The data come from the RNA Mapping Database (RMDB), library RNAMAK. Structure probing data (2A3 and DMS) for a 207-nucleotide construct. The reactions ran in a buffer of 150 mM KOAc, 10 mM MgCl2 and 150 mM bicine (pH 8.5), at 24 C. For DMS, 3,282 sequencing reads were counted.
[RMDB]
RNA sequence: GGGAACGACUCGAGUAGAGUCGAAAACAUUGCUUCGGCAAUGGUUAACGCGUACUACCUUUUGACGUUCCUCCACAGCUAGUUCUCCCAAAUAGGAGAACUUGGACCUGUGGUAGGGAACGAUAAGGUAUCGCCCAAGAGCCAGUUCGCUGGCUAAAAAGUAAGGAGACUUCGGUCUCCUUACUUUAAAAGAAACAACAACAACAAC
Reactivity to 2A3 in 0.01 (KOAc 150mM, MgCl2 10mM, bicine 150mM(pH8.5), 24C), signal-to-noise 2, nucleotides 027 to 156: c010a000u030u000g000c030u050u100c190g210g000c000a000a010u010g000g050u050u130a130a110c120g000c100g020u110a080c010u000a010c010c030u120u010u020u120g270a130c010g000u000u000c000c020u130c000c010a000c000a020g000c030u000a000g030u000u000c040u080c000c020c020a160a230a250u220a170g010g000a010g000a000a000c020u000u020g010g050a100c000c000u000g000u000g010g000u000a150g000g000g020a000a000c000g000a010u030a050a000g000g000u020a060u300c000g010c080c000c000a040a000g100a000g080c000c000a000g000u120u090c090g120c080u000g000g000c030u000a010a270
Reactivity to DMS in 0.01 (KOAc 150mM, MgCl2 10mM, bicine 150mM(pH8.5), 24C), signal-to-noise 1, nucleotides 027 to 156: c000a010u000u000g000c020u000u010c300g030g020c000a010a020u000g020g000u020u000a060a060c070g000c000g000u000a130c120u000a010c000c000u000u000u000u000g000a210c060g010u000u010c000c000u000c010c010a010c000a010g020c010u010a040g020u000u000c000u000c000c000c040a060a160a220u000a040g010g000a010g030a000a000c000u000u000g030g000a070c220c010u000g030u010g000g000u000a100g000g010g010a000a000c000g030a060u000a010a040g000g000u000a020u000c000g010c010c040c020a130a190g000a080g020c000c000a030g010u000u010c270g050c000u000g030g010c010u000a010a050